Conditions: 150 mM KOAc, 10 mM MgCl2 and 150 mM bicine (pH 8.5), 24 C. Chemical mapping of a 177-nucleotide RNA with DMS and 2A3. Reactivities are given for positions 27 through 126. DMS adducts were read by reverse transcription with MarathonRT.
RNA sequence: GGGAACGACUCGAGUAGAGUCGAAAAGCUGUUGCAUGGUGUUAUCUAGCACUGAACGGCCGUGCCGCAGCCGAGCCCAGUGCCCCACGCUCAUGAGCUCUGAGCCCAGUGCCCCACGCACAGGAUAGCACGAUAAAUUAUUCGUAAUUUAUCGUGCAAAAGAAACAACAACAACAAC
Reactivity to DMS in 0.01 (KOAc 150mM, MgCl2 10mM, bicine 150mM(pH8.5), 24C), signal-to-noise 6, nucleotides 027 to 126: g000c010u000g010u000u000g000c010a030u000g000g010u010g010u000u000a090u010c070u010a130g000c110a110c170u000g000a060a070c070g030g010c010c020g040u000g000c010c050g000c020a020g010c010c010g010a120g010c020c010c010a120g010u000g010c020c030c000c030a080c110g000c030u000c060a060u000g010a110g020c050u000c060u000g010a090g010c040c040c030a080g010u000g000c020c040c030c050a090c120g000c060a040c100a080g010g010a130u000a150
Reactivity to 2A3 in 0.01 (KOAc 150mM, MgCl2 10mM, bicine 150mM(pH8.5), 24C), signal-to-noise 3, nucleotides 027 to 126: g010c000u010g010u010u000g000c020a030u030g000g060u050g040u140u130a170u130c110u120a060g110c110a070c200u110g060a050a020c040g110g000c000c000g000u010g000c010c000g020c020a010g000c010c010g010a020g010c040c000c000a040g080u090g050c020c000c000c010a020c020g000c010u040c030a060u090g040a010g020c030u000c040u070g030a030g030c030c010c000a030g020u020g030c010c030c000c020a040c030g030c000a020c000a010g060g030a050u120a070